RNA sequence: GGGAACGACUCGAGUAGAGUCGAAAAACGGUGCGGAAGUUCGCGCUUCCGUGAAACGCGAAAAUCGGACGGUGGCUGCAAGUCGCAUCGCAAAACCGCGGCAAGUGGAGUUAGCGAGAGGGGGCUGAAACCAUCCAACACUUCGGUGUUGGAUGAACUAUCCAGGAAAGUUCGCUUUCCUGGAUAGAAAAGAAACAACAACAACAAC
Reactivity to 2A3 in 0.01 (KOAc 150mM, MgCl2 10mM, bicine 150mM(pH8.5), 24C), signal-to-noise 3, nucleotides 027 to 156: a000c050g010g020u020g000c000g000g020a040a020g050u060u150c050g000c030g000c050u030u000c000c000g000u020g050a110a070a010c110g000c010g070a040a030a010a120u110c030g020g020a000c010g000g050u020g040g050c050u110g010c040a040a050g020u010c010g010c030a030u030c040g000c020a050a040a000a000c030c060g010c020g040g030c090a090a090g030u050g070g020a060g030u070u100a020g080c020g030a020g040a020g030g000g000g000g020c000u010g010a070a000a000c020c000a000u000c000c000a000a000c000a000c000u050u080c220g090g000u000g000u000u010g000g010a000u000g000a000a000
Reactivity to DMS in 0.01 (KOAc 150mM, MgCl2 10mM, bicine 150mM(pH8.5), 24C), signal-to-noise 2, nucleotides 027 to 156: a040c010g000g060u000g040c000g040g010a000a070g040u000u000c210g000c210g010c000u000u010c000c110g000u000g010a060a070a040c040g010c040g030a100a030a080a080u010c050g020g000a120c060g010g040u020g050g050c000u000g040c050a110a100g000u000c020g000c010a100u000c030g000c050a080a060a090a130c030c060g000c050g030g000c010a040a090g020u020g020g000a130g000u010u000a080g000c050g020a100g020a150g000g020g000g030g050c030u010g000a090a040a120c130c010a040u000c000c010a030a030c010a000c000u000u000c300g050g000u010g000u000u000g010g000a020u000g010a030a060
Chemical mapping of a 207-nucleotide RNA with 2A3 and DMS. For 2A3 the reverse transcriptase was SuperScript II with manganese. Conditions: 150 mM KOAc, 10 mM MgCl2 and 150 mM bicine (pH 8.5), 24 C. It was measured as part of the RMDB library M2RFPK.